The record gives the reactivity of an RNA of 177 nucleotides to DMS and 2A3.
The reactions ran in a buffer of 150 mM KOAc, 10 mM MgCl2 and 150 mM bicine (pH 8.5), at 24 C.
The data come from the RNA Mapping Database (RMDB), libraries RFM100 and RFMREP.
For 2A3 the reverse transcriptase was SuperScript II with manganese.

[RMDB]
RNA sequence: GGGAACGACUCGAGUAGAGUCGAAAAGAGGCGUUGCAGGUGCGGCUGCUGUGCCGCACCUGUGUCAGCAGGUGGCAGAGAGCAGUGCGGCUACGUCUACGCUCCGCGCCCUGGCACGUGGGCUUCGCAUUUAAGGAUAUUUCGAUAUCCUUAAAUGAAAAGAAACAACAACAACAAC
Reactivity to DMS in 0.01 (KOAc 150mM, MgCl2 10mM, bicine 150mM(pH8.5), 24C), signal-to-noise 9, nucleotides 027 to 126: g000a060g000g010c020g020u010u010g010c100a030g010g010u000g010c000g000g020c000u010g020c230u020g010u010g020c000c010g000c000a000c000c000u000g000u000g010u000c040a040g010c110a110g010g010u010g010g030c020a090g010a150g010a030g000c010a040g010u010g000c010g000g000c180u030a070c030g010u010c020u030a040c040g000c010u000c010c020g000c180g000c010c010c010u000g010g010c010a030c050g020u010g010g000g000c010u000u000c060g000
Reactivity to 2A3 in 0.01 (KOAc 150mM, MgCl2 10mM, bicine 150mM(pH8.5), 24C), signal-to-noise 9, nucleotides 027 to 126: g050a020g020g020c060g070u130u140g020c060a010g000g010u010g010c010g020g000c020u150g080c100u130g090u100g030c010c000g000c000a000c000c000u000g000u000g000u010c000a010g030c040a030g020g020u060g100g020c150a080g130a010g000a000g110c080a030g030u040g130c030g040g020c080u160a080c060g020u020c040u070a030c060g000c000u010c000c010g010c000g000c000c000c010u010g010g010c010a000c050g030u090g030g050g000c010u030u030c020g000